[RMDB]
RNA sequence: GGGAACGACUCGAGUAGAGUCGAAAAGGGGUCGCUCACGAAUUCGCUGAUAGAGCUUGGAUUUAUGGAGCUGAAGCCUCCACGGCUCCAUUGUCAGCUCUAUAGCGAACUAUGAGCGACGGAGGCACCCAAACGAUAGUUGGUUCGCCAACUAUCGCGUACGUAUUUGAUUCGUCAAAUACGUACGAAAAGAAACAACAACAACAAC
Reactivity to 2A3 in 0.01 (KOAc 150mM, MgCl2 10mM, bicine 150mM(pH8.5), 24C), signal-to-noise 7, nucleotides 027 to 156: g090g020g030g010u010c000g000c010u010c000a020c030g110a280a300u050u010c010g000c010u090g080a060u010a010g020a000g020c090u130u260g120g000a050u170u240u120a010u080g000g010a000g000c000u010g020a090a020g020c010c000u000c010c000a010c000g000g000c000u000c000c000a000u000u010g010u010c050a030g000c000u000c000u010a010u010a000g000c000g000a000a000c010u040a040u060g000a000g000c000g000a000c000g000g000a000g000g000c010a060c000c000c000a070a090a000c000g000a000u000a000g000u000u010g070g030u060u060c280g060c100c000a000a000c000u000a000u000c000g000
Reactivity to DMS in 0.01 (KOAc 150mM, MgCl2 10mM, bicine 150mM(pH8.5), 24C), signal-to-noise 2, nucleotides 027 to 156: g000g030g020g030u000c000g020c000u030c000a040c010g010a060a090u000u000c020g000c000u010g000a040u000a040g000a020g030c010u010u000g020g000a050u000u010u000a030u000g020g030a020g010c000u000g000a060a100g020c050c020u000c020c020a300c070g020g010c010u000c000c010a020u000u000g000u000c050a110g020c000u000c010u000a030u000a020g000c000g010a010a010c020u000a040u010g000a040g000c000g010a030c020g030g020a030g050g060c020a180c020c010c010a070a110a210c000g020a010u000a010g030u000u000g000g020u010u010c300g000c020c010a010a020c000u000a000u010c000g020

Record summary:
Structure probing data (2A3 and DMS) for a 207-nucleotide construct. The DMS profile rests on 7,739 reads. 2A3 adducts were read by reverse transcription with SuperScript II with manganese. DMS adducts were read by reverse transcription with MarathonRT. The reactions ran in a buffer of 150 mM KOAc, 10 mM MgCl2 and 150 mM bicine (pH 8.5), at 24 C. It was measured as part of the RMDB library RNAMAK.